[RMDB]
RNA sequence: GGGAACGACUCGAGUAGAGUCGAAAAAAGCUGCGGAUUUUCUGGUAUGGUACUUACAGAGAUCUCACGAUCCCAGAAAUUAAAGACAUGGAAUGCGAAAAAAUCCAGAUCUGGAUUGGACAGUGGGGAGACAGGAAUCUUACAAACCAGUACGUUAGAUUAAGUACUGAUUCGUCAGUACUUAAUCAAAAGAAACAACAACAACAAC
Reactivity to DMS in 0.01 (KOAc 150mM, MgCl2 10mM, bicine 150mM(pH8.5), 24C), signal-to-noise 3, nucleotides 027 to 156: a060a110g010c060u010g040c060g000g010a090u010u010u000u000c000u040g020g000u000a060u000g010g020u000a050c070u020u000a130c040a080g000a070g010a050u000c010u000c070a140c070g000a140u010c030c010c010a200g010a090a080a100u000u010a060a080a100g000a070c030a060u010g020g010a080a100u000g010c000g010a010a010a090a070a100a070u000c010c020a030g010a110u010c070u000g010g000a100u000u000g020g020a060c030a060g000u010g000g030g000g020a080g020a050c050a090g000g000a070a070u000c020u000u000a080c070a050a060a090c030c010a100g010u000a050c060g010u000u000a160
Reactivity to 2A3 in 0.01 (KOAc 150mM, MgCl2 10mM, bicine 150mM(pH8.5), 24C), signal-to-noise 3, nucleotides 027 to 156: a000a010g100c110u060g000c030g090g010a070u090u010u130u000c010u030g030g030u080a070u100g090g020u050a070c030u040u020a040c080a020g080a010g000a050u020c040u020c010a030c050g030a040u050c000c000c000a000g050a010a080a010u100u120a070a060a040g020a010c020a040u040g000g020a050a010u030g010c050g050a040a080a020a030a000a010u000c040c010a020g020a090u040c060u110g000g020a030u040u050g020g020a020c020a020g020u060g000g020g000g000a050g000a000c000a010g030g060a040a030u020c000u040u100a060c050a020a090a040c010c030a020g050u090a040c070g020u040u140a010